RNA sequence: GGGAACGACUCGAGUAGAGUCGAAAAGCAUCUGGACGUGCAGUUACAGCUGCCCCUGCAGCCGGUGUGAACAACCGAAUCAUCGGCAUUGCGGAUGAAUCUGCAACUGCUGCCGGUGACGUCAUUCGAUUCACCAUCGAACCGGGCUCUGUCCAGGUCAAGUUUCGGGAUUCGUCCCGAAACUUGAAAAAGAAACAACAACAACAAC
Reactivity to 2A3 in 0.01 (KOAc 150mM, MgCl2 10mM, bicine 150mM(pH8.5), 24C), signal-to-noise 1, nucleotides 027 to 156: g060c000a050u010c000u050g000g000a020c030g110u110g010c050a030g030u080u180a090c020a060g040c010u030g010c000c020c000c040u030g020c010a000g020c020c000g000g000u020g000u000g130a030a070c020a030a040c030c070g070a060a030u070c000a000u000c000g010g010c000a020u040u070g020c000g000g000a050u090g120a030a270u050c000u020g040c040a050a030c010u060g010c010u060g000c040c000g000g020u050g030a080c100g050u060c040a050u100u010c030g080a070u000u060c060a040c010c030a040u080c060g080a040a010c000c010g030g140g040c020u020c030u180g000u000c010c000a000g000g000

Structure probing data (2A3) for a 207-nucleotide construct. The RNA was probed in 150 mM KOAc, 10 mM MgCl2 and 150 mM bicine (pH 8.5) at 24 C. Source: RMDB library OK3TST, as collected in RNAgym. 2A3 adducts were read by reverse transcription with SuperScript II with manganese.